[RMDB]
RNA sequence: GGGAACGACUCGAGUAGAGUCGAAAACUCCCCGGCGGCGUCACGAAAGACAUGUCUCGCCGAAACCGGGUCGUUGACCGAAAAUCCGGUAGCGCCUUCACGGAACAUACGCAGCAACUCCUCGGAAGCGAUCGACUCGAUUCGUCGAGUCGAUCGCAAAAGAAACAACAACAACAAC
Reactivity to 2A3 in 0.01 (KOAc 150mM, MgCl2 10mM, bicine 150mM(pH8.5), 24C), signal-to-noise 1, nucleotides 027 to 126: c010u050c000c000c000c000g000g080c000g000g070c090g010u130c000a040c120g270a240a030a010g040a030c020a000u090g070u100c000u030c130g010c000c000g000a080a000a000c000c000g000g010g010u010c090g030u030u070g080a100c090c020g000a000a000a000a280u000c000c000g000g000u000a000g000c000g010c000c000u010u060c020a060c160g080g000a050a020c060a070u130a000c090g000c010a010g030c000a020a060c020u010c000c010u020c040g200g030a160a000
This 177-nucleotide RNA was probed chemically with 2A3. Reactivities are given for positions 27 through 126. The reactions ran in a buffer of 150 mM KOAc, 10 mM MgCl2 and 150 mM bicine (pH 8.5), at 24 C. For 2A3, 582 sequencing reads were counted. Source: RMDB library OK1LIB, as collected in RNAgym. For 2A3 the reverse transcriptase was SuperScript II with manganese.